[RMDB]
RNA sequence: GGGAACGACUCGAGUAGAGUCGAAAACGGACCGUCUUCGGACGGUCCGAACGAACCGCGUGAGCGGUUCGAACCGGAACACUACGGUGUUCCGGAAGAAUCUAACUUCGGUUAGAUUCAAGGACUCCCAGUCGGCACAUGCGAUAUUUCAUACCACAAGAAUGUGGCGCUCCGCGGUUGGUGAGCAUGCUCGGUCCGUCCGAGAAGCCUUAAAACUGCGACGACACAUUCACCUUGAACCAAGGCGUGUACCGUUACAGGGGUCUACUGCGUACUUCGGUACGCAGAAAAGAAACAACAACAACAAC
Reactivity to 2A3 in 0.01 (KOAc 150mM, MgCl2 10mM, bicine 150mM(pH8.5), 24C), signal-to-noise 4, nucleotides 027 to 266: c010g010g010a000c000c000g010u020c020u030u070c230g090g000a000c000g000g010u010c000c000g000a000a010c000g010a000a000c000c010g010c040g050u090g080a070g010c000g020g000u000u000c000g000a010a030c010c000g000g000a000a000c000a010c010u060a040c300g110g000u010g000u000u010c000c000g000g000a000a040g000a000a000u000c000u000a000a000c000u030u040c150g020g010u000u000a010g010a000u000u000c000a000a030g050g000a010c010u050c010c000c010a010g050u020c000g020g010c010a000c000a010u020g010c010g130a070u040a130u170u090u030c050a050u070a230c050c080a110c110a290a060g010a000a000u010g000u000g000g000c020g000c070u100c090c020g000c010g000g020u000u020g040g080u100g020a100g010c020a060u290g020c020u000c010g000g030u050c100c240g070u030c010c000g040a000g000a010a000g000c000c000u120u150a060a140a000a010c010u020g040c020g260a300c000g010a000c220a000c000a000u000u000c000a020c000c010u010u020g040a010a010c090c040a180a050g180g010c000g010u010g000u020a020c000c000g000u000u010a020c030a030g000g000g030g020u000c000u050a080
Reactivity to DMS in 0.01 (KOAc 150mM, MgCl2 10mM, bicine 150mM(pH8.5), 24C), signal-to-noise 3, nucleotides 027 to 266: c020g010g010a030c000c010g010u000c000u000u020c190g010g000a010c000g050g010u000c010c000g010a010a060c030g000a010a000c000c000g020c000g000u010g000a130g020c020g010g010u000u000c000g000a100a180c000c010g000g000a010a010c000a000c000u000a070c160g050g010u000g000u000u000c000c020g010g000a050a040g000a020a010u000c000u000a000a000c000u000u010c210g020g020u000u000a010g010a010u000u000c010a150a130g010g000a030c000u010c000c000c000a230g010u000c020g000g000c040a020c020a010u000g000c030g020a160u010a130u010u000u000c010a030u010a090c230c190a130c300a160a140g010a030a010u000g030u000g000g000c010g000c140u010c100c020g020c000g010g000u000u000g000g030u000g000a110g010c000a010u000g010c000u000c000g010g000u000c220c240g000u020c010c000g010a020g000a010a030g000c000c010u000u010a100a090a010a010c000u000g020c000g010a080c010g000a010c000a010c000a010u000u000c020a050c200c120u000u010g000a030a030c230c140a100a150g000g000c010g010u000g000u000a100c000c010g000u000u010a030c070a180g010g000g000g000u000c010u000a110

Chemical mapping of a 307-nucleotide RNA with 2A3 and DMS.
The RNA was probed in 150 mM KOAc, 10 mM MgCl2 and 150 mM bicine (pH 8.5) at 24 C.
The 2A3 profile rests on 5,363 reads.
Reactivities are given for positions 27 through 266.
It was measured as part of the RMDB library POS240.
The DMS profile rests on 8,517 reads.